[RMDB]
RNA sequence: GGGAACGACUCGAGUAGAGUCGAAAAGAUAUGGACGUUCUCCGAACGCGAAGAACGGACGUCGGAAACGACGUCCGGGAGCGUGAGGAGAGACGUCCUAAGUCAAAGUGGAUAGUUCGCUAUCCACGACCAGUUGUUACUUCGGUAACAACUGGUCAAAAGAAACAACAACAACAAC
Reactivity to DMS in 0.01 (KOAc 150mM, MgCl2 10mM, bicine 150mM(pH8.5), 24C), signal-to-noise 3, nucleotides 027 to 126: g000a030u000a300u000g010g000a010c010g040u000u000c000u000c000c000g000a300a040c020g000c000g000a100a170g000a210a260c000g000g010a040c000g040u000c000g020g000a180a100a280c000g020a010c000g000u010c040c000g000g000g020a110g030c000g020u000g000a300g000g000a040g010a010g010a000c000g030u000c000c000u000a000a150g020u000c050a130a100a300g010u000g000g010a030u000a000g010u010u040c280g020c000u000a000u000c000c000a000c000
Reactivity to 2A3 in 0.01 (KOAc 150mM, MgCl2 10mM, bicine 150mM(pH8.5), 24C), signal-to-noise 2, nucleotides 027 to 126: g040a010u090a050u200g000g000a000c000g010u010u010c010u000c000c000g020a040a010c000g050c010g300a300a080g000a060a010c000g000g010a000c000g000u000c000g040g000a040a090a020c010g000a000c000g000u000c010c000g000g000g000a020g000c010g000u030g010a010g000g000a010g010a010g010a000c000g000u000c010c000u010a090a010g050u020c090a260a070a050g010u000g020g010a000u000a020g020u060u090c300g030c210u000a000u010c000c000a000c010
This 177-nucleotide RNA was probed chemically with DMS and 2A3. Source: RMDB library TTRDES, as collected in RNAgym. For DMS the reverse transcriptase was MarathonRT. The RNA was probed in 150 mM KOAc, 10 mM MgCl2 and 150 mM bicine (pH 8.5) at 24 C.